[RMDB]
RNA sequence: GGGAACGACUCGAGUAGAGUCGAAAAACAACUUAGCUGGAGGUGUUUCAGGUGUUGUGAAAGACAUUGUAGCAACUGUGUUUGAUGCUUUAAACCAGUUUGUACAACUAUGCACAGAAACAGCUACCCCCCUAAUUCUAUUCGUAGAAUUAGGGGGAAAAGAAACAACAACAACAAC
Reactivity to 2A3 in 0.01 (KOAc 150mM, MgCl2 10mM, bicine 150mM(pH8.5), 24C), signal-to-noise 5, nucleotides 027 to 126: a000c040a030a020c030u120u140a020g010c010u030g070g040a060g020g110u040g020u050u070u050c070a050g030g090u050g010u100u080g060u040g070a110a080a030g090a020c040a040u030u080g030u000a030g120c010a010a010c000u010g040u010g070u220u010u020g090a090u170g070c100u110u100u130a010a000a010c010c000a010g010u030u080u120g050u010a010c000a040a010c030u060a050u130g010c020a010c000a020g100a080a100a010c010a010g000c010u070a080c000
Reactivity to DMS in 0.01 (KOAc 150mM, MgCl2 10mM, bicine 150mM(pH8.5), 24C), signal-to-noise 5, nucleotides 027 to 126: a110c060a070a090c070u010u000a070g020c020u000g010g000a160g000g010u000g010u000u000u000c080a110g010g010u000g010u010u010g020u000g010a100a130a090g000a100c180a140u000u000g010u000a040g020c040a010a030c000u000g010u000g000u000u000u010g000a070u010g020c270u010u000u000a020a010a030c010c010a030g010u000u000u000g020u000a020c020a050a120c090u010a080u000g010c020a030c030a090g000a100a070a070c020a020g000c050u010a070c210
The data come from the RNA Mapping Database (RMDB), library OK2TST. Chemical mapping of a 177-nucleotide RNA with 2A3 and DMS. For 2A3, 5,308 sequencing reads were counted.